[RMDB]
This 177-nucleotide RNA was probed chemically with DMS. Values are in units of 0.01, from 0 to 300, in steps of 10. Conditions: 150 mM KOAc, 10 mM MgCl2 and 150 mM bicine (pH 8.5), 24 C.

RNA sequence: GGGAACGACUCGAGUAGAGUCGAAAAGAUAUGGACAGUCCCUUUCGAAUGUGAGCUUUUGACGCGUUGAGGGUCGGAAACGACCCAAGACGCGAUAAGCUCCAUUCGAAAGGGACUGUCCUAAGUCGUAUAACAACCAGUUCGCUGGUUGUUAUACAAAAGAAACAACAACAACAAC
Reactivity to DMS in 0.01 (KOAc 150mM, MgCl2 10mM, bicine 150mM(pH8.5), 24C), signal-to-noise 3, nucleotides 027 to 126: g010a090u000a300u000g010g000a000c000a000g000u000c000c000c000u010u000u000c000g000a010a010u000g000u000g010a000g040c010u000u000u000u010g020a210c060g030c020g020u000u000g010a300g000g020g000u010c000g000g000a100a110a240c000g010a010c000c000c000a010a130g000a000c000g020c020g010a040u000a020a030g000c000u000c000c000a000u010u000c010g010a010a010a000g000g020g000a010c000u000g000u000c000c000u000a000a050g000u000c100